Chemical mapping of a 207-nucleotide RNA with DMS and 2A3. For DMS the reverse transcriptase was MarathonRT. For 2A3 the reverse transcriptase was SuperScript II with manganese. The 2A3 profile rests on 1,465 reads.
[RMDB]
RNA sequence: GGGAACGACUCGAGUAGAGUCGAAAAAUACACCAGCAGUAGGACUCAGCGACCGUCACAACAAGGUUGUGCUGGUAUCCGACGGUCGUAUAGCCCUGUCUUGCAGGUUGCCUUGCACUGCCGUGCCACACCAUUUACAGAUUCGUCUGUAAAUGAAGGUAUAAUACCCCUUCGGGGGUAUUAUACCAAAAGAAACAACAACAACAAC
Reactivity to DMS in 0.01 (KOAc 150mM, MgCl2 10mM, bicine 150mM(pH8.5), 24C), signal-to-noise 1, nucleotides 027 to 156: a070u000a130c130a120c000c020a100g000c010a030g010u000a040g020g020a070c010u000c170a090g020c000g020a030c010c010g030u000c020a230c080a080a030c160a080a090g000g050u000u000g010u010g040c010u000g000g010u000a040u000c080c030g010a010c010g030g010u000c050g060u000a090u000a040g000c000c000c000u000g010u000c050u020u010g020c050a110g000g020u000u000g030c040c090u020u000g020c040a070c060u000g000c000c040g000u000g000c050c040a090c000a140c080c000a010u000u000u000a000c000a000g000a070u000u010c300g000u000c000u010g020u000a010a010a000u000g010a090a060
Reactivity to 2A3 in 0.01 (KOAc 150mM, MgCl2 10mM, bicine 150mM(pH8.5), 24C), signal-to-noise 2, nucleotides 027 to 156: a000u100a000c090a010c000c000a000g020c000a000g040u170a010g000g000a020c010u000c090a010g000c000g000a000c000c000g000u010c020a030c020a260a170c050a220a050g050g020u020u020g020u010g010c020u030g010g030u000a050u010c030c040g000a010c000g000g020u010c000g000u030a030u070a040g010c010c010c000u030g040u070c060u040u140g010c010a030g020g080u080u080g050c010c010u050u100g000c030a050c070u080g040c040c050g040u050g020c040c070a130c000a030c030c010a010u000u000u000a000c000a000g020a010u010u130c100g060u040c050u000g000u000a000a000a000u010g010a050a020

It was measured as part of the RMDB library M2RFPK.